[RMDB]
RNA sequence: GGGAACGACUCGAGUAGAGUCGAAAAUGCUUGUACGCGCUGACUGGUGCACCCGUGCGUGCAUGUGCAGAGCGGCGUGAGCGCGCACAGGCGUGCAUAUGCCGCCACGCUCACACGGGAGUGGUGAAUUUUACUAGGCUUUCGAGCCUAGUAAAAUAAAAGAAACAACAACAACAAC
Reactivity to 2A3 in 0.01 (KOAc 150mM, MgCl2 10mM, bicine 150mM(pH8.5), 24C), signal-to-noise 6, nucleotides 027 to 126: u140g010c020u050u050g050u100a040c020g020c000g010c070u070g090a140c090u110g080g040u080g030c010a020c000c010c020g050u030g000c050g010u020g000c030a070u150g050u050g060c090a060g060a040g170c030g040g000c010g020u070g050a070g020c000g010c000g030c000a090c040a220g240g130c030g010u020g020c020a090u120a010u230g010c000c000g000c000c000a010c020g010c010u010c000a050c000a010c060g040g010g010a070g030u080g010g040u050g030a020
Reactivity to DMS in 0.01 (KOAc 150mM, MgCl2 10mM, bicine 150mM(pH8.5), 24C), signal-to-noise 5, nucleotides 027 to 126: u020g010c040u000u000g000u010a070c100g030c060g020c010u000g020a070c060u040g020g010u000g020c080a130c020c030c060g000u000g000c100g030u010g000c060a080u030g040u010g040c300a100g000a180g010c040g010g030c030g050u000g010a060g010c000g010c030g030c020a160c230a080g010g010c000g020u000g000c030a080u020a030u020g020c010c000g000c020c010a040c040g000c000u000c010a060c070a020c070g000g000g000a070g010u010g000g020u000g020a090

The data come from the RNA Mapping Database (RMDB), library OK1LIB. This 177-nucleotide RNA was probed chemically with 2A3 and DMS. Conditions: 150 mM KOAc, 10 mM MgCl2 and 150 mM bicine (pH 8.5), 24 C.